[RMDB]
Source: RMDB library OK2TST, as collected in RNAgym. The record gives the reactivity of an RNA of 177 nucleotides to DMS and 2A3. Reactivities are given for positions 27 through 126. For 2A3 the reverse transcriptase was SuperScript II with manganese. The 2A3 profile rests on 785 reads.
RNA sequence: GGGAACGACUCGAGUAGAGUCGAAAAUAUUUGCCGUUAUCAUAACAUUUCAUAGGAUAGCGCACAGCCGGAAGGGGCUAAUCUCUCUGUUUCUAUGCGGCUUUCGGAAUGUUCACCGUGAUAUGUGUACCGUAGUGUCAUUCGUGACACUACGGUAAAAAGAAACAACAACAACAAC
Reactivity to DMS in 0.01 (KOAc 150mM, MgCl2 10mM, bicine 150mM(pH8.5), 24C), signal-to-noise 2, nucleotides 027 to 126: u030a080u000u010u000g010c090c050g010u000u010a050u000c060a040u010a100a040c090a050u010u000u000c090a150u010a160g000g000a060u000a070g010c040g010c010a120c110a040g010c300c050g010g000a050a090g000g010g000g010c130u000a090a110u010c040u000c060u000c040u000g010u000u020u000c000u010a090u000g000c030g040g000c040u000u000u000c020g010g000a030a020u010g000u000u000c180a130c090c060g000u000g010a070u010a040u000g000u000g000
Reactivity to 2A3 in 0.01 (KOAc 150mM, MgCl2 10mM, bicine 150mM(pH8.5), 24C), signal-to-noise 1, nucleotides 027 to 126: u120a070u030u130u170g120c020c010g050u080u050a020u100c010a020u010a190a030c010a110u040u160u130c110a070u150a070g160g000a010u030a040g040c000g000c020a040c030a060g000c010c010g080g080a060a010g020g020g070g040c050u060a000a080u030c020u000c000u030c010u050g040u050u030u090c070u050a080u070g030c030g010g100c000u010u020u020c030g000g020a110a030u000g040u000u060c050a040c130c010g040u020g020a000u030a020u130g170u000g010